[RMDB]
RNA sequence: GGGAACGACUCGAGUAGAGUCGAAAAUGGUAUCUGACACAUAAUCAUUUCUCUGAUUAUGUGUCUCGAAACAUGGCAGAAAGUGAGGGGGAACGGUCCUUGCGACACUGGUUGCUACUAUAUGAGCCCUUUAUAGUAAGUUCGCUUACUAUAAAGGAAAAGAAACAACAACAACAAC
Reactivity to 2A3 in 0.01 (KOAc 150mM, MgCl2 10mM, bicine 150mM(pH8.5), 24C), signal-to-noise 7, nucleotides 027 to 126: u100g030g030u100a070u050c050u050g000a000c000a000c000a010u000a010a000u000c010a020u020u270u070c130u030c030u040g000a000u000u000a010u000g000u000g010u010c000u000c000g010a010a010a010c050a050u070g040g000c020a010g070a100a050a010g080u040g030a070g000g020g000g000g010a030a030c050g040g060u040c020c000u020u090g090c030g070a030c020a010c050u030g080g010u080u040g040c010u040a090c020u070a080u050a120u300g100a060g020c010
Reactivity to DMS in 0.01 (KOAc 150mM, MgCl2 10mM, bicine 150mM(pH8.5), 24C), signal-to-noise 9, nucleotides 027 to 126: u000g010g010u000a100u000c060u000g000a010c000a000c000a000u000a000a000u000c000a040u010u010u010c150u000c240u000g000a010u000u000a000u000g010u000g010u000c000u000c130g000a070a070a080c080a070u000g010g010c050a050g010a060a080a080g010u000g000a300g010g000g010g010g000a080a130c220g010g010u000c010c030u000u010g020c050g010a100c060a050c060u000g010g010u010u000g010c020u000a060c100u010a090u000a070u010g010a130g010c150